[RMDB]
RNA sequence: GGGAACGACUCGAGUAGAGUCGAAAACAAUUGAGCGUCGCACAGACACAGACUAAGUCUGACACUGACAGAGCCUAAACCGCUCUGUCAGUGUGCGAGAUAUCGUUCUUAAUGUGAGCAGAGGAAAGAUAAAACUGUGGUUCGCCACAGUUUUAUCAAAAGAAACAACAACAACAAC
Reactivity to 2A3 in 0.01 (KOAc 150mM, MgCl2 10mM, bicine 150mM(pH8.5), 24C), signal-to-noise 4, nucleotides 027 to 126: c010a020a100u090u150g010a020g040c050g050u050c010g050c040a040c020a060g140a050c020a030c020a110g080a020c030u190a190a120g030u000c000u010g010a020c010a000c040u000g000a000c010a010g000a000g000c010c010u040a060a060a050c020c010g030c000u000c000u000g000u000c010a000g000u000g000u010g000c010g010a010g010a000u130a020u130c030g010u040u020c020u040u100a150a110u090g030u040g070a040g020c060a030g080a050g090g070a150a050a030
Reactivity to DMS in 0.01 (KOAc 150mM, MgCl2 10mM, bicine 150mM(pH8.5), 24C), signal-to-noise 5, nucleotides 027 to 126: c050a080a110u010u010g010a040g000c040g020u010c010g030c050a130c090a070g000a070c140a160c080a050g000a040c030u010a110a170g000u000c000u000g020a090c030a030c000u010g010a010c000a020g010a010g020c000c010u000a060a060a160c300c300g000c010u000c000u000g000u000c000a000g020u000g010u000g010c040g010a030g000a100u000a080u000c060g010u000u000c020u000u000a050a080u020g000u010g010a080g020c050a100g000a090g010g000a040a070a080

The record gives the reactivity of an RNA of 177 nucleotides to 2A3 and DMS. Values cover nucleotides 27 to 126. The 2A3 profile rests on 4,313 reads. DMS adducts were read by reverse transcription with MarathonRT. High 2A3 reactivity points to a flexible backbone, as in loops and unpaired stretches.